[RMDB]
RNA sequence: GGGAACGACUCGAGUAGAGUCGAAAACGCCUAAUCUUCGGAUUAGGCGAAAAGAGGACGUGGACGAGGCUUCAAAGGAAACGACGAUCACUCCCGAACAGAAAAGACUGGAGUUCGCUCCAGUCAACUUUAAUAGGGACUUCGGUCCCUAUUAAAGAAAAGAAACAACAACAACAAC
Reactivity to 2A3 in 0.01 (KOAc 150mM, MgCl2 10mM, bicine 150mM(pH8.5), 24C), signal-to-noise 2, nucleotides 027 to 126: c000g000c000c010u000a000a000u040c000u040u070c210g050g000a000u000u010a010g000g010c000g000a000a000a000a010g080a040g030g040a030c050g010u020g030g000a010c030g020a030g080g010c030u100u060c130a250a240a070g080g020a020a100a020c020g120a030c040g030a080u040c020a010c040u040c040c000c020g030a110a040c060a090g180a080a090a100a010g010a000c010u000g020g000a010g000u010u040c190g050c090u020c010c020a000g000u000c000a010a000
Reactivity to DMS in 0.01 (KOAc 150mM, MgCl2 10mM, bicine 150mM(pH8.5), 24C), signal-to-noise 2, nucleotides 027 to 126: c020g020c010c000u010a000a030u000c000u000u030c200g000g000a010u010u000a000g010g000c000g010a000a020a090a160g010a140g000g010a030c120g030u000g010g000a090c060g000a070g000g010c040u000u020c030a070a100a180g000g000a040a040a060c030g010a130c040g000a060u010c040a070c050u000c000c000c020g010a100a100c150a080g000a070a080a120a130g000a010c020u000g000g000a020g000u000u010c300g000c020u000c010c000a000g000u000c000a010a080